[RMDB]
RNA sequence: GGGAACGACUCGAGUAGAGUCGAAAACGAUCCUCGAGAGAGGAUCGACGAGUCUUCGGACUCGAUUACCGCGAUGAUGUGCCGCGGGGCUACGAUGGUAUUGUGGGAAAGAAUACCAUUGUACCUUCUUGUCGUAGCCGAACAACUUGCACGUCUAGGACUAGCACGUAUUCGUACGUGCUAGUCCAAAAGAAACAACAACAACAAC
Reactivity to 2A3 in 0.01 (KOAc 150mM, MgCl2 10mM, bicine 150mM(pH8.5), 24C), signal-to-noise 3, nucleotides 027 to 156: c020g000a010u020c000c000u030c040g050a040g000a010g010a000g050g000a000u000c000g000a010c000g000a000g010u000c030u010u160c240g140g000a010c000u000c000g000a060u120u170a150c000c000g000c020g010a060u140g000a000u020g000u000g010c010c030g000c030g040g000g010g000c000u010a000c000g000a010u100g000g010u000a000u000u050g000u040g000g000g050a100a200a030g140a160a070u110a130c000c000a010u000u040g020u000a000c000c000u160u180c170u190u270g020u020c000g000u000a000g020c000c000g000a010a030c060a000a140c080u130u110g000c000a000c010g000u020c000u010a030